[RMDB]
RNA sequence: GGGAACGACUCGAGUAGAGUCGAAAACAUGGUCACUUCCGAAGCGCUUUAGUGCCUUCCGUCCCUAAACCGCCAACAGCCAGAACGGCUUCUCCCCGCGGUUUGUCACUGAUCCGCAGGGCCCGGAGGGUUUACAUAGGUUCGCCUAUGUAAACCCAAAAGAAACAACAACAACAAC
Reactivity to DMS in 0.01 (KOAc 150mM, MgCl2 10mM, bicine 150mM(pH8.5), 24C), signal-to-noise 1, nucleotides 027 to 126: c100a090u000g000g000u000c040a030c040u000u010c040c010g020a090a090g030c060g000c050u020u010u000a080g010u030g010c040c020u010u020c070c070g010u000c020c030c010u000a020a030a050c040c030g000c040c130a080a040c160a050g030c010c010a190g000a120a160c120g000g030c050u000u000c100u010c020c030c040c060g020c040g050g000u000u020u000g000u000c180a090c100u020g010a060u000c050c020g000c060a060g000g000g000c060c050c020g010g000a220
Reactivity to 2A3 in 0.01 (KOAc 150mM, MgCl2 10mM, bicine 150mM(pH8.5), 24C), signal-to-noise 1, nucleotides 027 to 126: c040a070u070g070g000u060c050a030c170u090u020c030c040g010a040a020g030c050g000c010u200u180u260a090g130u090g070c010c000u020u030c050c020g030u090c020c090c000u060a090a090a010c000c030g000c010c000a070a040c080a140g010c040c000a030g070a180a060c030g020g090c000u080u040c050u050c000c010c010c030g020c010g010g050u010u000u100g010u000c000a020c070u030g040a050u010c000c010g050c030a050g030g000g020c000c010c000g010g000a020